[RMDB]
RNA sequence: GGGAACGACUCGAGUAGAGUCGAAAAAAAUUGCUGUAUGACCAUCAUGCCCACACGCAUGCAUACAUCCUGGAUUUUUAGACUUAUAAGGCACAUCGUUUAAUUCCUCGACAGGUAACGCAUCAAAUCGAACAGGUAGGUUCGCCUACCUGUUCGAAAAAGAAACAACAACAACAAC
Reactivity to DMS in 0.01 (KOAc 150mM, MgCl2 10mM, bicine 150mM(pH8.5), 24C), signal-to-noise 1, nucleotides 027 to 126: a000a010a020u020u020g030c060u020g090u000a000u000g000a000c100c020a100u040c020a010u000g060c010c100c090a020c070a030c180g030c000a020u060g030c020a000u060a110c000a000u000c020c000u040g050g000a160u000u000u000u050u000a100g010a070c060u000u000a060u000a130a230g000g090c000a050c180a090u000c040g110u000u080u010a020a100u000u000c140c000u000c000g000a090c030a000g000g010u000a000a060c090g000c140a020u020c040a060a070a040
Reactivity to 2A3 in 0.01 (KOAc 150mM, MgCl2 10mM, bicine 150mM(pH8.5), 24C), signal-to-noise 3, nucleotides 027 to 126: a000a000a070u090u050g040c080u020g040u060a090u050g030a050c000c020a090u090c050a020u080g010c010c070c070a050c020a040c090g030c010a030u060g010c000a060u070a050c010a010u010c010c090u080g110g060a130u040u060u000u020u170a020g010a070c000u030u050a150u050a260a050g060g030c000a030c000a100u080c000g000u000u030u180a020a070u040u010c000c000u060c030g040a010c030a050g080g000u050a080a000c050g030c030a040u040c110a100a050a060